[RMDB]
RNA sequence: GGGAACGACUCGAGUAGAGUCGAAAAAGUAUCCUGAGUACCACGGAGCACGUGAAAUUCUGUGGGAAUCUGUCAGAACCAUCUGAUAAGGCUAAAUACUCCUAGAAGACCGAUAGUGGACUAGUACCCGGACUUGUAUGUUCGCAUACAAGUCCGGAAAAGAAACAACAACAACAAC
Reactivity to 2A3 in 0.01 (KOAc 150mM, MgCl2 10mM, bicine 150mM(pH8.5), 24C), signal-to-noise 2, nucleotides 027 to 126: a000g230u180a160u070c000c000u000g100a000g000u040a000c020c000a000c050g050g000a000g020c070a030c240g120u070g100a130a050a000u030u000c000u000g010u020g010g010g000a000a050u000c030u050g000u000c000a050g010a090a160c060c000a270u000c000u010g000a000u000a100a130g030g000c000u080a160a160a000u100a090c000u070c000c000u050a050g000a070a000g110a160c030c090g040a010u110a040g120u170g030g020a100c000u030a000g130u010a020c020
Reactivity to DMS in 0.01 (KOAc 150mM, MgCl2 10mM, bicine 150mM(pH8.5), 24C), signal-to-noise 1, nucleotides 027 to 126: a120g000u010a130u000c020c000u100g200a100g100u010a040c000c000a060c120g000g000a000g000c030a160c220g020u000g020a030a060a180u130u000c000u000g190u000g000g000g000a140a090u000c030u000g000u000c000a000g130a130a280c060c300a030u030c000u000g000a000u000a000a030g020g000c130u000a000a120a220u000a000c120u000c040c030u000a060g010a040a120g000a130c090c000g100a040u000a180g000u160g000g000a010c050u000a030g000u000a190c120
Structure probing data (2A3 and DMS) for a 177-nucleotide construct. For DMS, 750 sequencing reads were counted. Reactivities are given for positions 27 through 126. The 2A3 profile rests on 763 reads.